Background: Conditions: 150 mM KOAc, 10 mM MgCl2 and 150 mM bicine (pH 8.5), 24 C. An RNA of 177 nucleotides, treated with 2A3 and DMS and read out base by base. Reactivities are given for positions 27 through 126. DMS adducts were read by reverse transcription with MarathonRT. It was measured as part of the RMDB library OK2TRN.

[RMDB]
RNA sequence: GGGAACGACUCGAGUAGAGUCGAAAAGCGACCCGGAUCGUCGGCGAAGAACUGGCGAAGAUGGGUGUUUCCGAUCUGAUCGUGAUGUCUGCGCAGGGCGUCCCAUGCCGGGGUAGCGGUGAUGUCGGCACGAACCAUCAUUCGUGAUGGUUCGUGCAAAAGAAACAACAACAACAAC
Reactivity to 2A3 in 0.01 (KOAc 150mM, MgCl2 10mM, bicine 150mM(pH8.5), 24C), signal-to-noise 1, nucleotides 027 to 126: g030c020g070a100c000c000c000g030g020a070u060c010g050u010c000g050g030c020g060a070a050g070a160a110c020u030g020g000c040g010a000a000g120a050u070g000g000g010u030g070u040u020u000c000c010g000a050u000c060u130g040a060u010c030g050u100g040a110u070g080u030c020u120g070c030g000c080a060g150g050g080c020g050u120c040c000c040a110u130g020c030c000g050g000g020g020u110a020g010c000g000g110u050g050a050u090g060u080c020g000
Reactivity to DMS in 0.01 (KOAc 150mM, MgCl2 10mM, bicine 150mM(pH8.5), 24C), signal-to-noise 1, nucleotides 027 to 126: g040c110g000a140c010c000c000g010g010a210u000c010g050u000c010g100g000c000g010a100a110g000a090a060c040u000g000g000c000g000a020a050g040a280u020g010g010g010u000g010u000u000u010c020c000g000a030u030c060u000g000a130u000c050g030u000g010a080u010g010u000c010u010g010c060g020c060a070g020g000g000c080g030u000c030c040c030a080u010g010c040c030g000g000g000g000u000a190g000c020g020g040u000g000a050u000g010u000c090g000